[RMDB]
The record gives the reactivity of an RNA of 177 nucleotides to 2A3 and DMS. High DMS reactivity at an A or C suggests that its Watson-Crick edge is free. For 2A3, 3,485 sequencing reads were counted.
RNA sequence: GGGAACGACUCGAGUAGAGUCGAAAAUAAACGGAAUUAUUUCAGUGUCGAGCGUUCGCUGGCGUUGAGCGGCCGAAUAUUUCAAGAUCAGCUCGGGAUUAAACUGAAUUUGCCAUGAGGGCGGCUGCCACGAGGUAGUAUUCGUACUACCUCGUGGAAAAGAAACAACAACAACAAC
Reactivity to 2A3 in 0.01 (KOAc 150mM, MgCl2 10mM, bicine 150mM(pH8.5), 24C), signal-to-noise 6, nucleotides 027 to 126: u090a020a050a010c070g010g090a080a100u220u080a090u080u070u010c020a040g020u000g060u150c030g030a020g000c020g020u050u030c030g020c110u100g070g000c040g050u110u180g080a080g050c030g010g000c020c010g040a050a040u100a100u100u170u110c070a090a020g020a100u050c060a020g000c010u000c010g000g010g030a080u160u150a090a080a030c010u010g060a020a040u050u030u120g010c030c040a080u190g070a070g050g030g020c030g020g010c040u050g030
Reactivity to DMS in 0.01 (KOAc 150mM, MgCl2 10mM, bicine 150mM(pH8.5), 24C), signal-to-noise 3, nucleotides 027 to 126: u020a050a050a160c060g000g010a060a110u020u010a050u000u000u000c020a040g030u010g020u010c030g010a020g020c020g000u020u020c060g020c030u030g010g000c040g040u010u010g000a080g000c060g000g030c010c050g000a040a140u010a020u010u000u010c140a100a130g010a050u010c090a210g020c020u000c020g000g020g010a110u020u020a020a080a090c020u000g000a020a050u000u000u000g020c080c070a090u020g000a080g010g000g020c050g000g000c100u000g000